[RMDB]
RNA sequence: GGGAACGACUCGAGUAGAGUCGAAAAAAAAGUUACAUUAAACGUGCUCAGAAGUUACGUUGGAGCAAAAUCUCAUCAAAGUUUUGUUUGGAGACUACAUCUGGUUAUAGAUUACAGAGGCAUAAUCAUUAAUCCUGUCACACGUUAUCUUACGUACCACUACAAGCAUCUUCGGAUGCUUGUAGUGAAAAGAAACAACAACAACAAC
Reactivity to 2A3 in 0.01 (KOAc 150mM, MgCl2 10mM, bicine 150mM(pH8.5), 24C), signal-to-noise 2, nucleotides 027 to 156: a000a000a010a070g100u160u090a030c070a100u170u220a060a050a000c010g030u010g020c000u040c050a030g020a150a080g030u050u060a000c000g030u040u070g000g020a000g020c030a000a000a040a110u070c040u040c040a140u020c060a110a070a100g010u020u080u060u030g030u070u020u020g080g020a040g010a030c020u060a020c050a060u060c020u000g010g040u050u060a060u060a150g030a020u030u030a040c030a020g060a120g100g000c000a040u040a050a010u090c030a020u040u160a030a050u060c020c010u040g000u060c020a030c030a000c100g010u030u050a070u100c040u060u070a050c030g040u010a080c030
Reactivity to DMS in 0.01 (KOAc 150mM, MgCl2 10mM, bicine 150mM(pH8.5), 24C), signal-to-noise 1, nucleotides 027 to 156: a050a040a020a090g000u000u000a110c050a070u010u000a060a070a030c030g000u010g000c000u010c040a140g010a120a100g000u030u000a070c070g060u000u010g020g000a110g010c070a040a010a080a070u030c030u000c050a120u010c160a100a080a120g020u000u000u000u000g030u000u000u010g020g030a110g040a060c020u000a050c030a160u000c020u000g020g010u010u010a160u010a240g030a140u000u000a050c030a050g000a050g020g020c020a070u000a040a060u020c060a130u000u010a050a070u010c030c020u010g020u000c070a030c040a080c090g020u010u000a090u000c010u000u000a040c080g010u000a110c070